Conditions: 150 mM KOAc, 10 mM MgCl2 and 150 mM bicine (pH 8.5), 24 C.
Chemical mapping of a 177-nucleotide RNA with DMS and 2A3.
DMS adducts were read by reverse transcription with MarathonRT.

RNA sequence: GGGAACGACUCGAGUAGAGUCGAAAAUACCGCGUCUUCGGACGCGGUAAGAUCCCGUCGGAAAACCUGAGAGACGGAGAUCAAGAGACUCAAGCUACGCAAUGACUGCCGGAUUCGUCCGGCAGAAAACUAUGCUAUCCUUCGGGAUAGCAUAGUUAAAAGAAACAACAACAACAAC
Reactivity to DMS in 0.01 (KOAc 150mM, MgCl2 10mM, bicine 150mM(pH8.5), 24C), signal-to-noise 2, nucleotides 027 to 126: u000a010c020c000g010c000g010u010c010u000u010c190g020g000a020c000g020c000g020g010u000a000a020g010a020u000c000c000c020g040u010c020g020g020a110a050a110a110c130c120u000g010a140g020a220g010a030c010g000g000a110g020a010u000c030a140a090g020a190g020a070c060u000c030a100a130g000c060u000a040c130g000c170a090a070u020g010a210c010u000g000c000c010g000g020a010u000u010c120g000u000c000c000g000g030c000a010g000a010a040
Reactivity to 2A3 in 0.01 (KOAc 150mM, MgCl2 10mM, bicine 150mM(pH8.5), 24C), signal-to-noise 2, nucleotides 027 to 126: u020a000c010c000g020c030g020u000c010u060u030c210g140g020a010c000g010c030g010g010u000a000a000g010a000u000c020c010c000g010u000c010g090g160a120a170a150a240c050c070u250g000a090g000a010g000a190c020g010g010a220g000a080u060c020a030a000g080a010g020a100c010u030c090a070a040g020c060u110a020c050g000c090a060a180u100g040a080c010u010g000c000c000g010g010a040u050u020c120g060u000c030c000g040g000c000a000g000a000a000